[RMDB]
This 177-nucleotide RNA was probed chemically with DMS. The DMS profile rests on 597 reads. The reactions ran in a buffer of 150 mM KOAc, 10 mM MgCl2 and 150 mM bicine (pH 8.5), at 24 C.
RNA sequence: GGGAACGACUCGAGUAGAGUCGAAAAGCAUACACGGAGUUUGACGAUGACAAACUCCUCCAGUUUGUCGUCAUGGCGACUCCUGAGGAUCUCGCAGCCAACGCGGAGUUCGUCCGUCUGGGGGACAGCAUGUCCGCUACUUCGGUAGCGGACAUGCAAAAGAAACAACAACAACAAC
Reactivity to DMS in 0.01 (KOAc 150mM, MgCl2 10mM, bicine 150mM(pH8.5), 24C), signal-to-noise 1, nucleotides 027 to 126: g000c150a060u010a070c150a220c210g000g030a070g000u000u000u000g000a300c180g010a050u000g000a000c000a000a010a000c010u000c060c040u000c060c080a170g000u000u000u000g020u000c000g040u000c010a070u010g000g010c100g020a020c000u000c000c010u010g000a110g000g010a060u000c030u000c000g020c110a060g030c060c120a150a140c160g040c010g010g000a060g000u010u010c080g010u000c000c050g010u000c140u000g010g010g010g010g020a180c190a170